[RMDB]
RNA sequence: GGGAACGACUCGAGUAGAGUCGAAAAACGCAACCCAAGGUGCAUGCCGAGGUGCGGUAGGCCUCGUUAACAAACCGCAAAAAAAUAGUCGCAAACGACGAAAACUACGCACUCGCAGCUUAAUAACAGUAGGGUCCCUACUUCGGUAGGGACCCAAUCAAUACUUGUGGUUCGCCACAAGUAUUGAAAAAGAAACAACAACAACAAC
Reactivity to 2A3 in 0.01 (KOAc 150mM, MgCl2 10mM, bicine 150mM(pH8.5), 24C), signal-to-noise 1, nucleotides 027 to 156: a000c080g070c070a080a040c020c010c000a010a070g070g000u020g010c040a010u050g050c130c060g000a030g010g030u020g020c030g000g070u030a040g000g040c010c000u030c040g060u070u070a070a040c020a040a020a030c030c050g000c000a000a230a000a000a000a000a000u210a030g010u070c050g010c090a050a160a000c040g030a010c020g020a010a010a140a000c050u070a030c020g000c010a010c040u020c070g060c020a000g030c030u130u100a130a020u250a200a070c040a060g050u120a230g030g000g000u030c000c000c000u020a020c000u010u140c170g020g000u000a000g040g000g040a000c000c000c000a000a000
Reactivity to DMS in 0.01 (KOAc 150mM, MgCl2 10mM, bicine 150mM(pH8.5), 24C), signal-to-noise 2, nucleotides 027 to 156: a120c060g050c080a050a210c000c000c000a110a280g010g020u000g100c060a070u000g000c080c010g050a060g000g030u000g010c000g030g050u000a050g020g030c020c050u010c060g020u010u010a120a100c070a070a050a060c030c100g060c080a010a000a040a080a070a120a100u000a130g000u000c000g050c070a070a130a090c020g020a050c000g000a050a020a050a040c020u000a060c030g000c000a060c030u000c040g050c040a040g010c070u000u010a070a190u000a110a140c050a130g020u000a120g000g060g060u010c020c000c000u010a030c000u010u010c240g010g030u000a040g010g000g010a000c000c000c000a010a010